[RMDB]
RNA sequence: GGGAACGACUCGAGUAGAGUCGAAAAGGGUGAGUUCGCUCACCCAAAAAACCUUUGUGCCUAGGGAGAACCUGGGUCCAACGAUCCCAUUGGGAUCGUAACGACCCAGAGUUCAUCGAUCUAGGCACUCUGGUAAAAAACGAGAUUCGUCUCGUAAACCUAGUAAGUAGUUCGCUACUUACUAGGUAAAAGAAACAACAACAACAAC
Reactivity to DMS in 0.01 (KOAc 150mM, MgCl2 10mM, bicine 150mM(pH8.5), 24C), signal-to-noise 2, nucleotides 027 to 156: g000g020g030u000g000a040g040u000u000c300g020c010u000c000a020c000c000c000a000a000a050a080a020a000c000c010u000u000u000g080u000g000c010c000u000a020g010g000g000a130g000a010a020c000c020u010g020g030g020u010c030c070a300a040c020g020a020u000c000c000c020a300u010u010g030g000g010a020u000c020g030u000a040a090c140g000a020c010c000c010a000g010a130g010u000u000c000a110u010c160g020a090u000c000u000a010g000g020c020a010c000u000c010u000g010g030u000a000a050a080a050a050a040c030g020a040g010a110u000u000c140g020u010c000u000c000g020u020a040a150
Reactivity to 2A3 in 0.01 (KOAc 150mM, MgCl2 10mM, bicine 150mM(pH8.5), 24C), signal-to-noise 2, nucleotides 027 to 156: g020g000g000u020g010a020g020u110u130c190g060c010u020c010a030c020c070c100a040a000a000a000a010a010c000c050u000u010u000g000u000g000c020c000u010a030g000g040g000a040g000a000a010c000c000u000g000g000g000u020c000c050a030a030c000g000a000u020c020c000c050a130u210u300g000g000g000a000u040c000g010u010a040a010c060g000a010c000c000c000a000g010a030g000u000u010c010a020u180c010g000a000u000c000u000a000g000g030c010a000c000u000c000u020g030g000u030a100a100a000a040a000a000c010g000a000g010a010u040u160c140g140u000c090u000c000g000u030a200a070
The data come from the RNA Mapping Database (RMDB), library RNAMAK.
The record gives the reactivity of an RNA of 207 nucleotides to DMS and 2A3.
The RNA was probed in 150 mM KOAc, 10 mM MgCl2 and 150 mM bicine (pH 8.5) at 24 C.
For 2A3 the reverse transcriptase was SuperScript II with manganese.